[RMDB]
RNA sequence: GGGAACGACUCGAGUAGAGUCGAAAAGAAAGAAAGUAAUUAAGCCUUAGUGAAUAUCUACACUAGUAAGUUUUUCUUCAUGUUUGAAAUGCUUAGCAUUGUAGAUACUCCCUAAGGCUUGGGUGAACUUCUUUUCAGUCUUCGGACUGAAAAGAAGAAAAGAAACAACAACAACAAC
Reactivity to 2A3 in 0.01 (KOAc 150mM, MgCl2 10mM, bicine 150mM(pH8.5), 24C), signal-to-noise 4, nucleotides 027 to 126: g090a020a070a000g100a050a110a010g080u200a050a090u140u050a010a010g010c000c000u000u000a000g000u000g010a010a000u000a010u000c000u010a000c010a010c010u070a070g070u000a010a020g000u000u030u060u020u000c040u070u030c070a200u250g300u210u090u070g020a000a010a000u030g000c010u020u000a040g140c020a070u000u020g000u000a000g000a000u000a000c000u010c000c010c000u000a000a000g000g000c000u000u000g000g010g030u110g020a030a010
Reactivity to DMS in 0.01 (KOAc 150mM, MgCl2 10mM, bicine 150mM(pH8.5), 24C), signal-to-noise 1, nucleotides 027 to 126: g000a120a080a100g000a090a090a090g000u020a120a110u010u010a010a000g000c010c000u010u020a000g000u010g000a020a020u000a000u000c010u010a000c000a010c050u000a090g020u000a020a000g000u000u000u000u010u000c020u000u010c190a120u030g020u010u030u010g000a000a010a000u010g000c000u000u000a010g020c070a030u010u000g000u000a000g000a010u010a000c020u000c000c050c010u000a000a000g000g020c000u000u000g000g000g000u000g020a100a150